[RMDB]
RNA sequence: GGGAACGACUCGAGUAGAGUCGAAAAAGAGACCCCUGACAGGAAAGGCAAAGGAACCACAGAAGGUAGGGUUGCUGCGUUGUCCGUGUUGUGAGUCCUCUGUGUCUGCCUCUGAGCUGAAGAGCCCUCCAUAACGUGCGUGCAUCAUGUGCCUGGAGAUCAAAAUAUGAUUCGUCAUAUUUUGAUCAAAAGAAACAACAACAACAAC
Reactivity to 2A3 in 0.01 (KOAc 150mM, MgCl2 10mM, bicine 150mM(pH8.5), 24C), signal-to-noise 5, nucleotides 027 to 156: a000g080a010g050a020c000c000c000c030u030g030a030c020a070g040g050a090a070a020g010g000c030a070a020a060g070g000a040a030c040c020a040c040a100g090a170a030g070g010u090a030g040g000g020u050u060g030c030u050g000c030g040u040u060g030u030c050c080g000u030g020u070u030g020u030g020a030g030u030c020c000u020c030u030g050u020g020u080c020u040g030c000c000u050c050u060g040a050g010c010u030g050a070a020g020a040g040c010c010c010u040c030c010a040u050a100a020c030g030u030g030c030g020u030g010c010a040u070c020a030u170g020u020g040c000c010u010g000g000a060
Reactivity to DMS in 0.01 (KOAc 150mM, MgCl2 10mM, bicine 150mM(pH8.5), 24C), signal-to-noise 3, nucleotides 027 to 156: a100g000a130g000a110c010c010c000c000u010g010a140c070a070g000g010a060a070a080g010g020c030a040a110a070g000g020a100a060c030c030a090c050a110g000a080a070g010g000u010a080g010g010g010u000u000g010c040u010g020c060g030u000u000g010u010c010c080g000u000g020u000u020g020u000g010a090g010u000c030c030u000c020u000g010u000g020u000c040u040g010c020c010u010c050u000g010a100g010c040u000g000a090a110g010a100g000c010c030c010u000c030c030a080u000a070a050c050g000u000g010c050g020u010g000c040a090u000c060a090u000g020u000g000c060c000u000g030g020a300
An RNA of 207 nucleotides, treated with 2A3 and DMS and read out base by base. 2A3 adducts were read by reverse transcription with SuperScript II with manganese. The 2A3 profile rests on 4,848 reads.